[RMDB]
RNA sequence: GGGAACGACUCGAGUAGAGUCGAAAAGCAACAUAGAUCGUUCUAUUAACGAACACGCGCGGAUCGUCGGUGGUCGGCGAGCCCACGGACGUACUUGAUCGCGCGAUCGAGUAAAAAUCGCCGGCAACAAAUUGCGAUGAUUCGUCAUCGCAAUUUGAAAAGAAACAACAACAACAAC
Reactivity to 2A3 in 0.01 (KOAc 150mM, MgCl2 10mM, bicine 150mM(pH8.5), 24C), signal-to-noise 3, nucleotides 027 to 126: g020c000a000a130c010a090u170a060g060a100u120c060g020u060u000c060u080a230u220u220a120a020c050g000a020a020c040a030c090g000c000g010c000g050g050a060u060c010g020u020c040g160g000u010g020g030u030c020g010g000c010g020a050g060c020c000c010a010c010g150g020a000c000g030u060a050c060u080u160g100a100u240c010g000c000g000c000g060a000u000c010g020a020g070u110a030a150a000a010a000u000c000g000c010c050g040g010c050a100a000
Reactivity to DMS in 0.01 (KOAc 150mM, MgCl2 10mM, bicine 150mM(pH8.5), 24C), signal-to-noise 3, nucleotides 027 to 126: g000c040a060a070c140a100u000a090g020a050u010c080g010u000u000c050u000a300u010u030a100a130c090g010a040a050c080a170c090g020c040g020c010g010g010a060u000c000g030u000c010g000g050u000g010g000u000c010g000g000c020g050a030g010c220c010c000a010c040g000g010a040c050g000u000a060c100u010u010g000a030u000c000g000c110g010c070g000a010u000c020g010a090g010u010a010a030a040a040a030u000c010g010c010c000g000g010c110a100a100
Chemical mapping of a 177-nucleotide RNA with 2A3 and DMS. Reactivities are rounded to 0.1 and cut off at 0 and 3. The 2A3 profile rests on 2,119 reads. For DMS the reverse transcriptase was MarathonRT. The reactions ran in a buffer of 150 mM KOAc, 10 mM MgCl2 and 150 mM bicine (pH 8.5), at 24 C. It was measured as part of the RMDB library M2PK90. The DMS profile rests on 1,926 reads.